[RMDB]
RNA sequence: GGGAACGACUCGAGUAGAGUCGAAAAGCUAAUCUACCUUAAGGCUUCAGGAAACUUGGAGGAGUUCACCAAGCCAACUCAUAAAACUUAUAGCGAGAUAUUCGAGAAAUGGUAUCAAGCCUAUCAAGAUACGGUAGAGCCAACCACGGCUUCUCGACAUGAUAGUGCUCUUCGGAGCACUAUCAUGAAAAGAAACAACAACAACAAC
Reactivity to 2A3 in 0.01 (KOAc 150mM, MgCl2 10mM, bicine 150mM(pH8.5), 24C), signal-to-noise 3, nucleotides 027 to 156: g040c040u050a090a080u090c010u050a070c010c010u080u100a130a030g010g000c010u080u060c120a050g060g020a100a070a090c050u100u170g140g000a090g030g040a020g040u020u060c080a090c120c030a000a000g000c000c030a040a040c050u090c130a070u200a170a130a040a030c020u100u080a040u110a160g030c040g020a070g040a070u100a070u190u190c040g010a030g060a130a050a100u150g010g020u040a090u190c060a060a030g020c000c010u020a010u060c090a080a020g030a170u110a110c080g030g000u010a010g000a000g020c000c030a020a020c030c040a060c060g060g010c040u020u030c000u010c000g040a020